[RMDB]
RNA sequence: GGGAACGACUCGAGUAGAGUCGAAAAAAAGAAAGAAAAUUAGGUAGAUCUAGUGGUGCACACCUGGAAUCCCAGCUAUCUGGGAGGCUGAGGCAUAAGAAUUGCUUGAACCUGGAAGGUGGAGGUUGCAGUGAGCUCAGAUUGCGCCACUGCACUAAAUCCCUGCAUUAUUCGUAAUGCAGGGAUUAAAAGAAACAACAACAACAAC
Reactivity to 2A3 in 0.01 (KOAc 150mM, MgCl2 10mM, bicine 150mM(pH8.5), 24C), signal-to-noise 3, nucleotides 027 to 156: a000a030a020g130a060a040a010g030a070a090a070a040u290u180a060g050g010u040a020g010a100u000c030u030a020g030u020g090g030u040g000c050a050c010a000c050c010u000g000g050a030a020u020c000c000c000a000g000c040u120a060u260c010u010g000g010g010a010g020g020c030u030g070a060g060g000c020a030u030a120a090g060a110a140u150u030g010c010u010u010g010a010a080c010c060u030g030g060a070a030g040g010u050g000g060a070g060g000u110u100g000c010a000g010u010g020a020g010c020u020c060a080g080a300u080u260g000c060g000c020c000a000c000u000g000c000a000c000u010a060
Reactivity to DMS in 0.01 (KOAc 150mM, MgCl2 10mM, bicine 150mM(pH8.5), 24C), signal-to-noise 2, nucleotides 027 to 156: a020a030a130g030a080a080a070g010a130a030a080a130u000u030a070g000g010u000a050g010a090u000c010u020a090g030u000g000g010u010g030c060a110c040a030c020c000u000g020g000a120a140u000c000c010c010a040g030c180u000a080u020c020u010g000g000g010a030g000g000c100u000g010a080g020g000c030a080u000a030a100g000a070a110u000u010g030c020u000u000g000a050a050c020c020u000g030g000a090a140g030g040u000g000g040a060g000g000u010u010g010c010a050g000u000g000a220g020c000u000c050a100g000a270u020u000g000c000g050c000c010a000c010u010g000c000a070c070u000a030
Structure probing data (2A3 and DMS) for a 207-nucleotide construct. Reactivities are given for positions 27 through 156. The 2A3 profile rests on 1,411 reads. Conditions: 150 mM KOAc, 10 mM MgCl2 and 150 mM bicine (pH 8.5), 24 C. For DMS the reverse transcriptase was MarathonRT.